[RMDB]
RNA sequence: GGGAACGACUCGAGUAGAGUCGAAAAGGUUUGCUUCCUUUUACUCCCAAAAUCUUUUUACCGUGGGGUAAAAAGAAUCAUCAUGGGGGUAUAAAAGGAACCAAAUUUAAAUUUAACUCAAGGGGUCGUAUCCUAUGAACUUCGGUUCAUAGGAUACAAAAGAAACAACAACAACAAC
Reactivity to 2A3 in 0.01 (KOAc 150mM, MgCl2 10mM, bicine 150mM(pH8.5), 24C), signal-to-noise 4, nucleotides 027 to 126: g060g000u000u000u000g000c010u020u000c010c010u010u010u010u010a000c000u020c000c000c000a000a080a040a080u010c020u010u010u000u000u000a010c020c020g180u270g110g300g000g000u020a000a000a000a000a000g040a010a080u120c070a020u010c010a020u070g010g000g000g000g000u000a010u070a030a050a000a000g000g000a000a000c000c000a000a000a000u100u180u060a070a110a080u110u130u100a050a030c020u020c100a040a050g030g020g000g030u040c040
Reactivity to DMS in 0.01 (KOAc 150mM, MgCl2 10mM, bicine 150mM(pH8.5), 24C), signal-to-noise 1, nucleotides 027 to 126: g000g000u000u000u000g000c300u010u000c010c000u000u000u000u000a030c010u000c000c000c020a040a090a130a050u000c000u000u000u000u000u000a000c020c010g020u060g070g080g020g000u030a040a000a040a010a000g000a030a040u030c190a070u010c250a100u000g020g020g010g050g060u000a010u040a030a000a090a030g010g010a020a020c150c000a000a000a000u000u000u000a040a080a190u010u030u010a100a090c000u020c030a190a200g000g000g050g000u000c090